[RMDB]
RNA sequence: GGGAACGACUCGAGUAGAGUCGAAAAGAUAUGGACACAGCUUUUGACGCGAUGGACUCGGAAACGAGUUACAUCGCGAUAAGCUGGUCCUAAGUCAAAUCGUGAGACCCUUCGGGGUCUCACGAAACUCAGCUAUAUCCUUCGGGAUAUAGCUGAGAAAAGAAACAACAACAACAAC
Reactivity to 2A3 in 0.01 (KOAc 150mM, MgCl2 10mM, bicine 150mM(pH8.5), 24C), signal-to-noise 1, nucleotides 027 to 126: g010a000u070a020u150g000g040a090c180a020c000a300g000c000u000u100u280u230g270a120c070g000c000g010a010u000g010g010a000c000u020c000g000g000a020a030a020c020g000a000g030u030u010a050c000a000u000c010g000c010g000a000u000a010a010g000c010u000g000g020u000c000c000u010a180a000g030u000c030a030a030a150u030c000g010u000g000a000g030a000c030c000c000u000u150c300g000g040g020g000u000c000u000c010a000c020g000a000a000a000
Reactivity to DMS in 0.01 (KOAc 150mM, MgCl2 10mM, bicine 150mM(pH8.5), 24C), signal-to-noise 1, nucleotides 027 to 126: g010a030u010a300u000g010g000a000c000a120c000a010g040c020u000u000u000u000g010a220c070g010c000g010a010u000g000g000a010c000u010c010g020g000a070a110a260c000g000a000g000u000u000a020c000a010u000c010g000c000g010a000u000a010a010g020c070u000g000g000u000c000c000u020a040a120g010u000c050a140a050a200u000c000g000u000g000a020g000a020c000c000c000u010u010c170g030g000g000g050u000c000u000c000a000c010g000a010a010a050